[RMDB]
RNA sequence: GGGAACGACUCGAGUAGAGUCGAAAACAGAGAAAGAAAAAGUACUCGCAUGGCUCGAAUGGGUGCAAAAGCCUGAAGUAUGGCGCAACGGUUUUAUGAGCCGCCCUGAACCAAACAAAACCGAAUGGGUAUCACACCACACCUAUGUAGUCAAAACCAACACCAGCUCAUUCGUGAGCUGGUGUUGAAAAGAAACAACAACAACAAC
Reactivity to 2A3 in 0.01 (KOAc 150mM, MgCl2 10mM, bicine 150mM(pH8.5), 24C), signal-to-noise 1, nucleotides 027 to 156: c030a000g040a000g060a090a230a000g110a130a060a090a000a000g090u120a120c000u010c070g000c000a010u070g020g010c000u020c000g020a110a060u070g000g000g000u010g000c030a000a080a000a080g010c000c020u020g000a070a000g070u110a040u180g120g030c090g000c020a060a080c100g000g020u020u070u020u120a070u100g060a080g030c050c040g000c010c020c000u080g030a040a020c040c000a020a040a120c060a000a130a010a070c030c000g110a070a180u110g050g000g010u060a160u190c030a020c010a010c070c020a020c060a020c010c010u000a020u190g100u090a020g170u210c030a070a040a030a020c300